[RMDB]
RNA sequence: GGGAACGACUCGAGUAGAGUCGAAAAGUUCCUGCUCUAUCAGCUGGGCAAGAACAUCGAUCCGCUCAUCUACAAGGAGGUGAUCUCGGACUUGUCCCGCGAAAUGAGCGGCGAUGAGCAUAGCGCAUAGCUGAGUAUCCUUCGGGAUACUCAGCUAAAAAGAAACAACAACAACAAC
Reactivity to 2A3 in 0.01 (KOAc 150mM, MgCl2 10mM, bicine 150mM(pH8.5), 24C), signal-to-noise 1, nucleotides 027 to 126: g020u000u000c000c000u010g000c000u000c000u010a140u110c080a080g000c040u000g000g000g000c060a040a010g030a020a040c020a050u140c030g050a060u020c010c030g080c010u000c010a120u080c060u140a230c060a180a120g110g010a020g000g090u060g050a050u030c050u020c060g010g000a020c010u050u040g070u000c000c010c000g020c010g050a060a060a020u110g000a010g000c010g000g030c000g080a070u050g060a030g110c100a080u130a010g050c070g000c030a070
Reactivity to DMS in 0.01 (KOAc 150mM, MgCl2 10mM, bicine 150mM(pH8.5), 24C), signal-to-noise 2, nucleotides 027 to 126: g010u000u000c020c010u000g010c000u000c030u000a220u000c070a080g030c030u000g000g000g020c020a070a030g000a030a180c030a110u010c110g020a100u000c010c060g010c140u010c010a030u020c140u010a120c280a130a090g010g020a030g010g030u010g000a050u000c010u020c220g000g010a140c010u000u000g010u000c040c020c110g020c050g030a020a080a100u000g010a040g000c010g000g020c060g000a060u030g020a080g040c040a120u000a100g000c070g010c090a090
Chemical mapping of a 177-nucleotide RNA with 2A3 and DMS. It was measured as part of the RMDB library OK2TST.